Structure probing data (DMS and 2A3) for a 207-nucleotide construct. It was measured as part of the RMDB library M2RFPK. For 2A3, 3,240 sequencing reads were counted. For DMS, 3,060 sequencing reads were counted. Values are in units of 0.01, from 0 to 300, in steps of 10. In probing experiments dimethyl sulfate is read out at A N1 and C N3, which are open when not base-paired. 2A3 adducts were read by reverse transcription with SuperScript II with manganese. The reactions ran in a buffer of 150 mM KOAc, 10 mM MgCl2 and 150 mM bicine (pH 8.5), at 24 C.
RNA sequence: GGGAACGACUCGAGUAGAGUCGAAAAGAAUUGGUAUGUAAGCUACUUCUUCCAGUAGCUGCGUCAUAACAUCAAGGUUAUGCAUACUGAGCCGAAGCUCAGCUUCCGUCCUCCAAGGAAGACCAAAUACAGCUCAGCCCGUUCGCGGGCUGAGCAAGUAGACUUAGAUCUUCGGAUCUAAGUCUACAAAAGAAACAACAACAACAAC
Reactivity to DMS in 0.01 (KOAc 150mM, MgCl2 10mM, bicine 150mM(pH8.5), 24C), signal-to-noise 2, nucleotides 027 to 156: g020a100a090u000u000g020g020u000a060u000g000u010a300a300g000c000u000a000c000u000u010c080u000u030c110c050a260g020u000a000g020c000u000g000c000g020u000c010a010u000a010a000c010a300u000c270a180a120g020g020u000u000a020u020g000c000a050u010a000c020u020g010a040g000c050c060g020a100a090g000c010u000c100a070g010c030u000u000c060c020g030u000c050c030u000c090c050a060a090g010g000a010a060g000a140c070c060a030a030a080u010a130c050a150g060c010u000c000a000g000c000c000c030g050u010u010c300g070c090g000g040g050c010u000g000a000g030c040a010a020
Reactivity to 2A3 in 0.01 (KOAc 150mM, MgCl2 10mM, bicine 150mM(pH8.5), 24C), signal-to-noise 4, nucleotides 027 to 156: g070a020a140u030u030g000g000u010a000u020g000u020a020a000g000c000u000a000c010u040u150c010u080u010c040c000a000g010u000a000g000c020u010g000c000g010u010c010a000u000a000a020c010a080u280c170a130a050g300g000u000u010a000u000g000c010a000u010a010c010u010g000a000g000c010c030g040a020a000g010c020u050c300a020g000c000u030u000c020c010g040u040c000c020u080c050c060a040a040g010g000a000a010g010a010c030c060a010a100a030u200a110c060a030g000c010u000c000a010g000c010c000c000g000u020u040c170g010c010g050g000g000c010u010g000a000g000c010a000a000